[RMDB]
RNA sequence: GGGAACGACUCGAGUAGAGUCGAAAAGUAUGCACUUCGGUGCAUACAAAAAGCGUACUACAGUUUCGACUCGCCAUCGAGUUACGUCCCAAAUAGGACGUAACGAUGAGAUGGACCCGAGUGCUGUAUCGCAAAAAGGGGUUGUUCGCAACCCCAAGAGGAAGCCGUAGUUCGCUACGGCUUCCUCAAAAGAAACAACAACAACAAC
Reactivity to 2A3 in 0.01 (KOAc 150mM, MgCl2 10mM, bicine 150mM(pH8.5), 24C), signal-to-noise 2, nucleotides 027 to 156: g000u000a000u000g000c010a010c000u020u130c300g070g010u000g000c000a010u010a000c000a000a070a000a000a000g060c010g030u070a090c030u010a000c040a040g040u020u160u150c110g070a000c000u000c050g050c000c010a000u000c000g030a040g010u000u000a000c000g030u060c000c000c000a020a020a160u240a020g000g000a000c000g000u000a000a010c010g110a240u290g020a040g000a180u000g020g000a040c030c110c020g000a020g040u030g000c000u020g020u020a080u300c030g000c080a070a070a000a000a020g020g020g000g000u010u030g010u000u120c280g010c110a000a000c000c000c000c000a000a030
An RNA of 207 nucleotides, treated with 2A3 and read out base by base. The data come from the RNA Mapping Database (RMDB), library RNAMAK. The reactions ran in a buffer of 150 mM KOAc, 10 mM MgCl2 and 150 mM bicine (pH 8.5), at 24 C. 2A3 is a SHAPE reagent: it acylates the 2'-hydroxyl of flexible nucleotides of all four kinds.